[RMDB]
RNA sequence: GGGAACGACUCGAGUAGAGUCGAAAAUUUUAAGUCCACCCUUUGAAACUCCUAUAGGAGCUAUAAUUUCUCUUAUUGGUGUACCAUUAUUUUUAAAUUUGGCUCGUAGACAAAGGAGUGGAAUAUGCCAUACCGAGGAGUUCGCUCCUCGGUAUGGAAAAGAAACAACAACAACAAC
Reactivity to 2A3 in 0.01 (KOAc 150mM, MgCl2 10mM, bicine 150mM(pH8.5), 24C), signal-to-noise 4, nucleotides 027 to 126: u100u110u010u050a110a040g010u000c000c000a020c010c000c020u020u000u000g140a150a100a040c000u000c030c000u010a010u020a030g080g000a020g040c040u070a080u040a240a200u050u220u020c000u000c000u050u000a010u000u080g030g000u060g060u150a040c000c000a050u090u030a110u090u150u030u080u240a110a180a170u030u010u040g020g000c010u030c210g100u090a050g020a130c000a000a000a010g010g010a090g010u050g000g010a000a010u060a040u030g040
Reactivity to DMS in 0.01 (KOAc 150mM, MgCl2 10mM, bicine 150mM(pH8.5), 24C), signal-to-noise 1, nucleotides 027 to 126: u040u000u020u140a040a160g000u000c020c000a000c020c000c000u010u010u000g000a030a090a060c160u000c080c030u000a060u000a050g000g020a020g000c140u000a020u030a120a060u020u030u000c300u000c020u050u000a020u000u000g000g030u000g000u000a050c020c000a010u000u000a030u000u010u080u030u070a000a060a030u000u000u000g060g050c060u000c010g020u000a070g020a200c000a000a020a000g000g000a220g030u040g040g000a020a020u000a020u040g000